RNA sequence: GGGAACGACUCGAGUAGAGUCGAAAAUCAUGGUUCAAGUGUGCUGAAUGUAUUGCUGUUUGAAGCUCAUUUAUUAUUCUUUGCAUGGCUUCGUUGUAGCCUCGAGCUGUGGCAGGUUUUCGAGGGACAGUUCGUUAUGCAUCAAUCAACGCACAUCCACUGACGCUAGUUUCGACUAGCGUCAGUGAAAAGAAACAACAACAACAAC
Reactivity to 2A3 in 0.01 (KOAc 150mM, MgCl2 10mM, bicine 150mM(pH8.5), 24C), signal-to-noise 2, nucleotides 027 to 156: u050c000a100u200g160g000u110u090c070a160a060g060u040g000u020g000c000u030g050a060a000u000g100u100a040u160u080g010c000u000g100u180u130u250g130a050a010g000c030u040c230a030u090u170u170a140u100u120a050u140u040c070u020u040u040g140c020a000u040g060g000c020u080u000c040g070u030u150g050u020a080g020c000c000u040c000g000a050g020c030u050g000u030g120g140c090a090g010g000u010u060u190u090c020g010a010g000g060g000a000c000a000g000u050u180c010g040u100u000a020u060g000c000a060u000c080a080a270u020c030a070a110c150g050c070a000c010a030u050c000
An RNA of 207 nucleotides, treated with 2A3 and read out base by base.
It was measured as part of the RMDB library OK3TST.
The 2A3 profile rests on 610 reads.
The reactions ran in a buffer of 150 mM KOAc, 10 mM MgCl2 and 150 mM bicine (pH 8.5), at 24 C.